[RMDB]
RNA sequence: GGGAACGACUCGAGUAGAGUCGAAAAAGGAUCGGUAGAAAAGAGCGAGACCUCCGAUUCGAGAGCUCCUGGACUCCUCGGCUCUGGAGUCCUCCGACCCGUGAGGUCGAGGAUCCCCGCGCAGGGAGAUAGUAGUCUUGUUCGCAAGACUACUAUCAAAAGAAACAACAACAACAAC
Reactivity to DMS in 0.01 (KOAc 150mM, MgCl2 10mM, bicine 150mM(pH8.5), 24C), signal-to-noise 3, nucleotides 027 to 126: a110g000g000a020u000c020g010g000u010a050g000a120a100a090a110g010a120g010c070g000a100g000a160c100c020u000c010c010g000a070u010u000c020g000a120g010a170g020c060u000c010c020u000g000g010a130c080u000c020c010u000c070g020g020c020u000c030u000g010g000a050g000u000c010c030u010c060c040g000a020c010c000c020g000u010g020a110g030g000u010c010g000a050g010g000a070u000c020c010c010c040g000c260g000c070a140g000g000g010a130
Reactivity to 2A3 in 0.01 (KOAc 150mM, MgCl2 10mM, bicine 150mM(pH8.5), 24C), signal-to-noise 2, nucleotides 027 to 126: a000g030g000a020u020c030g010g070u210a030g100a100a160a070a020g070a040g060c070g030a050g060a100c010c000u000c000c000g010a010u010u020c020g010a030g000a010g120c030u020c030c020u030g040g050a030c020u020c000c000u010c060g070g020c030u020c020u050g010g010a050g020u000c010c000u010c030c020g010a010c000c000c010g130u120g060a120g020g000u000c010g000a010g010g020a040u010c010c000c000c010g010c000g000c010a040g040g000g000a060
The record gives the reactivity of an RNA of 177 nucleotides to DMS and 2A3. It was measured as part of the RMDB library 15KREP. Conditions: 150 mM KOAc, 10 mM MgCl2 and 150 mM bicine (pH 8.5), 24 C. For DMS, 3,340 sequencing reads were counted. 2A3 is a SHAPE reagent: it acylates the 2'-hydroxyl of flexible nucleotides of all four kinds. For DMS the reverse transcriptase was MarathonRT.